RNA sequence: GGGAACGACUCGAGUAGAGUCGAAAACAGGCAUCCAACGAGCGGCUAGCGACGGCACCUAACUAGACGGGGGCCGAGCGAGGCCCCGAGUUGUGGCCUGAACUAGAACGCAAACCGGUUGAGCACGGGCUUUUAAAUAUUUCGAUAUUUAAAAGCCAAAAGAAACAACAACAACAAC
Reactivity to 2A3 in 0.01 (KOAc 150mM, MgCl2 10mM, bicine 150mM(pH8.5), 24C), signal-to-noise 1, nucleotides 027 to 126: c020a010g060g010c010a050u020c020c020a060a020c060g040a020g020c030g010g000c000u010a020g020c020g100a100c030g020g020c030a110c010c020u070a070a080c020u050a070g150a230c110g070g010g000g040g000c000c000g020a060g200c250g090a200g010g000c000c000c000c000g010a030g000u010u030g020u060g030g040c000c000u010g000a000a000c000u000a020g040a190a040c020g010c050a050a060a050c050c040g070g000u030u050g030a010g050c080a040c130g040

Conditions: 150 mM KOAc, 10 mM MgCl2 and 150 mM bicine (pH 8.5), 24 C. This 177-nucleotide RNA was probed chemically with 2A3. 2A3 adducts were read by reverse transcription with SuperScript II with manganese. Reactivities are given for positions 27 through 126. For 2A3, 1,801 sequencing reads were counted.